[RMDB]
RNA sequence: GGGAACGACUCGAGUAGAGUCGAAAACCCGAAUGAACCGGGAACAAGCGCGGGGUCCUGGCCUGGGCUGGGAGCUCCAGGAGCUGGGCGGUUCUGGACCGCGGUAUGGGCCGGGCCUGGAGCCCCACUUUCGGUGAGGAUUCGUCCUCACCGAAAGAAAAGAAACAACAACAACAAC
Reactivity to 2A3 in 0.01 (KOAc 150mM, MgCl2 10mM, bicine 150mM(pH8.5), 24C), signal-to-noise 3, nucleotides 027 to 126: c020c000c010g020a100a190u290g020a030a030c050c030g010g010g040a060a120c080a190a020g100c070g030c120g120g050g010g000u010c000c010u010g000g020c000c010u120g000g050g000c040u050g050g050g050a060g000c000u000c000c010a040g070g030a020g080c050u070g070g060g020c030g000g030u050u040c010u030g050g040a030c060c030g020c040g070g000u200a120u170g080g070g000c000c000g020g020g010c010c000u020g010g000a050g050c000c000c000c000a000
Reactivity to DMS in 0.01 (KOAc 150mM, MgCl2 10mM, bicine 150mM(pH8.5), 24C), signal-to-noise 2, nucleotides 027 to 126: c000c000c000g000a050a140u040g000a070a130c020c050g000g020g010a140a170c120a070a090g000c170g000c150g000g000g000g000u010c000c000u000g020g040c090c010u040g030g000g000c010u000g000g000g000a160g020c040u010c000c100a070g000g000a030g010c000u020g000g020g040c110g010g000u000u000c080u020g020g000a100c010c020g020c060g010g030u010a080u010g030g020g000c000c040g000g000g000c000c030u000g000g010a020g000c010c000c000c040a100